[RMDB]
RNA sequence: GGGAACGACUCGAGUAGAGUCGAAAAGAAUCUCAAGGAAAUCAUCCUCGUCGAAGAUCAACUUGAGCAGCGAAUGCAUAUCAUAGCCAGCAUUGGUGUCAUCCGGCAUGAAAGUAUCCAAGCUGUGGAUUGCCCUCUAGUUCGCUAGAGGGCAAUCAAAAGAAACAACAACAACAAC
Reactivity to 2A3 in 0.01 (KOAc 150mM, MgCl2 10mM, bicine 150mM(pH8.5), 24C), signal-to-noise 1, nucleotides 027 to 126: g010a050a100u030c000u000c000a010a020g030g000a060a050a030u020c020a000u020c000c070u120c100g230u120c100g090a030a010g020a020u000c020a020a030c010u040u030g000a020g000c050a020g030c010g040a150a020u070g000c000a020u040a020u140c050a030u080a060g000c020c000a010g000c040a090u030u150g040g010u110g120u030c020a060u050c070c070g000g010c070a000u000g090a120a000a030g030u030a020u060c030c030a040a010g000c030u030g030u070g120
Reactivity to DMS in 0.01 (KOAc 150mM, MgCl2 10mM, bicine 150mM(pH8.5), 24C), signal-to-noise 2, nucleotides 027 to 126: g000a110a060u020c020u000c000a050a050g010g000a160a160a040u010c020a050u010c020c040u020c300g010u010c120g020a070a090g020a040u020c020a000a300c000u000u000g000a000g020c110a100g030c020g020a040a040u000g020c050a040u010a110u000c040a040u010a110g000c040c020a040g000c090a110u000u010g070g000u020g000u010c030a070u020c030c080g010g040c010a060u000g000a070a070a130g020u000a080u000c060c030a030a160g000c010u000g000u000g010